RNA sequence: GGGAACGACUCGAGUAGAGUCGAAAAGGACUCAUUCCUGCGGUUAUGAUUAUGUCUACAACCCUUUCUUUGUCGAUGUUCAACAGUGGGGUUAUGUAGGCAAUCUUGCUACUAAUCACGAUCGUUAACGGGUGGAUGUUCGCAUCCACCAAAAGAAACAACAACAACAAC
Reactivity to DMS in 0.01 (KOAc 150mM, MgCl2 10mM, bicine 150mM(pH8.5), 24C), signal-to-noise 4, nucleotides 027 to 129: g000g000a060c090u000c090a180u040u010c000c020u000g040c000g000g020u020u050a060u010g020a030u000u020a040u050g050u010c030u010a020c020a030a070c000c030c040u030u070u060c040u030u030u010g030u030c100g020a140u060g040u020u020c070a050a020c110a040g030u000g000g000g000g000u000u000a060u090g000u000a030g000g000c000a010a010u040c090u000u080g020c100u030a080c050u010a040a030u030c020a000c090g010a040u000c030g010u040u040a060a090c240g050
Reactivity to 2A3 in 0.01 (KOAc 150mM, MgCl2 10mM, bicine 150mM(pH8.5), 24C), signal-to-noise 9, nucleotides 027 to 129: g060g030a040c020u020c080a040u100u060c000c010u010g000c010g010g000u020u010a010u040g010a010u000u030a040u130g010u000c000u000a010c000a020a050c000c000c000u050u250u070c010u070u070u060g050u060c100g220a270u220g120u260u130c020a030a010c010a090g000u010g010g010g000g000u020u040a120u140g000u000a000g000g000c010a010a060u030c030u030u160g050c010u050a100c020u020a010a010u010c020a000c060g010a000u010c000g010u040u080a110a030c080g020